[RMDB]
RNA sequence: GGGAACGACUCGAGUAGAGUCGAAAAUCAUACCGUGCUUGCAAAGGCUGAGUUAUGCUGUUCUGCACGCAUGGUUUGGAGAGAGUGGUGCAAUGUCUGUGGCAUAAAAGAUGUUGUUCUACAAGGCCUACUAUCUUUCGUUCGCGAAAGAUAGUAGAAAAGAAACAACAACAACAAC
Reactivity to 2A3 in 0.01 (KOAc 150mM, MgCl2 10mM, bicine 150mM(pH8.5), 24C), signal-to-noise 6, nucleotides 027 to 126: u050c000a010u020a030c000c010g010u000g000c000u020u010g020c010a030a070a060g030g000c020u070g090a140g300u260u170a110u190g020c010u030g140u170u060c030u030g000c000a000c020g010c000a000u010g010g000u010u000u050g030g000a040g000a010g010a010g010u020g000g000u020g000c010a010a020u010g020u000c020u020g060u090g080g000c060a060u120a100a130a010a020g020a030u040g000u010u010g000u010u000c010u030a070c030a080a050g070g000c010
Reactivity to DMS in 0.01 (KOAc 150mM, MgCl2 10mM, bicine 150mM(pH8.5), 24C), signal-to-noise 6, nucleotides 027 to 126: u010c020a050u000a010c010c000g040u000g000c000u010u000g000c020a020a080a260g000g000c010u000g010a190g020u010u010a060u010g010c000u000g010u020u010c240u000g010c010a010c070g010c000a000u000g010g010u000u000u000g010g010a100g000a120g010a120g020u000g010g010u010g010c000a020a020u000g010u000c020u000g000u010g020g020c140a120u000a060a070a090a040g010a040u000g010u000u000g000u000u000c020u000a060c080a110a110g000g020c150

Conditions: 150 mM KOAc, 10 mM MgCl2 and 150 mM bicine (pH 8.5), 24 C.
Structure probing data (2A3 and DMS) for a 177-nucleotide construct.
It was measured as part of the RMDB library 15KREP.
DMS adducts were read by reverse transcription with MarathonRT.
2A3 adducts were read by reverse transcription with SuperScript II with manganese.